RNA sequence: GGGAACGACUCGAGUAGAGUCGAAAAGUGAAAUGAUGAUUCUGUUUAUCCAUUCGCUGAGUACGCUGCUCUGACCUUCUUCCCAGUCUCGGUUCCUGUUCUGGGAGCUUGGGGCUGAGUAGCCACCGUGAUCUUCUUGGUUCGCCAAGAAGAUCACAAAAGAAACAACAACAACAAC
Reactivity to DMS in 0.01 (KOAc 150mM, MgCl2 10mM, bicine 150mM(pH8.5), 24C), signal-to-noise 1, nucleotides 027 to 126: g040u000g010a030a070a160u010g010a090u000g010a030u000u000c230u030g000u020u000u000a050u000c030c080a110u000u000c030g040c030u000g000a140g000u000a060c300g030c010u000g000c000u000c020u000g000a130c050c000u000u000c060u000u010c010c010c000a020g000u000c020u010c050g000g020u000u000c010c010u000g000u010u000c070u000g000g000g000a010g010c250u000u030g060g000g000g000c010u000g000a010g000u000a040g030c020c180a060c100c160
Reactivity to 2A3 in 0.01 (KOAc 150mM, MgCl2 10mM, bicine 150mM(pH8.5), 24C), signal-to-noise 2, nucleotides 027 to 126: g010u020g020a030a040a060u060g030a030u020g020a020u200u000c050u200g180u100u100u090a040u010c030c000a040u040u070c020g000c000u000g010a010g120u060a020c060g000c010u020g000c010u010c000u030g220a270c020c050u110u080c020u020u030c040c000c000a000g050u000c010u010c030g120g020u050u020c030c000u050g050u210u090c050u120g000g030g000a040g000c000u070u290g010g000g000g000c000u000g000a000g040u040a020g000c000c020a000c000c090